[RMDB]
RNA sequence: GGGAACGACUCGAGUAGAGUCGAAAACCAUAACAGUUCGCUGUUAUGGACUCUCGGAAUGCGGAAUAAUUAAUCGUCCGCUUACGAUUAAUACCGACUAUAAAGCGUAACACUUCGGUGUUACGAACCGGAUCGAUGCAUUCGUGCAUCGAUCCGGAAAAGAAACAACAACAACAAC
Reactivity to 2A3 in 0.01 (KOAc 150mM, MgCl2 10mM, bicine 150mM(pH8.5), 24C), signal-to-noise 1, nucleotides 027 to 126: c000c000a020u000a020a000c000a000g010u080u110c110g070c060u020g000u000u000a000u010g000g050a030c010u000c000u000c040g010g030a200a110u120g000c000g030g090a140a080u250a180a100u150u060a040a030u030c050g000u050c030c050g060c070u000u070a010c010g000a000u040u040a030a020u050a120c000c000g060a010c110u070a060u070a270a150a090g060c000g000u010a010a000c000a000c000u000u030c140g120g000u000g050u030u000a000c000g000a000a000

Overview:
Chemical mapping of a 177-nucleotide RNA with 2A3. The data come from the RNA Mapping Database (RMDB), library M2PK50. 2A3 adducts were read by reverse transcription with SuperScript II with manganese. The reactions ran in a buffer of 150 mM KOAc, 10 mM MgCl2 and 150 mM bicine (pH 8.5), at 24 C.